[RMDB]
RNA sequence: GGGAACGACUCGAGUAGAGUCGAAAAAAGCUUCAACGCCUUUUUUUCCUAUCUUCUUUAGCACCGGGCUAGGGAGUAAGCCCGUGGAACCUUAGUUUUGUUCCCUCGGGACUUACUUGUGGUUCCUGUGGUGCACUCCUGACCCUGCUGCUUUGAAUCUAUCUGUGUGCUUCGGCACACAGAUAGAAAAAGAAACAACAACAACAAC
Reactivity to 2A3 in 0.01 (KOAc 150mM, MgCl2 10mM, bicine 150mM(pH8.5), 24C), signal-to-noise 1, nucleotides 027 to 156: a000a000g040c080u270u270c130a230a050c050g060c060c030u050u010u030u000u010u040u070c040c000u070a270u080c120u120u040c030u020u030u130a000g000c000a010c020c000g020g000g090c010u030a050g080g030g000a000g010u040a040a020g040c000c010c010g090u020g000g000a000a000c000c000u000u040a060g030u030u270u070u160g120u140u070c000c010c020u110c150g110g020g010a010c020u000u000a000c000u060u080g120u200g120g000u000u030c000c000u080g080u250g030g000u040g000c000a000c000u000c000c010u000g080a120c000c000c000u000g010c020u000g000c000u030u060u070g040a020a070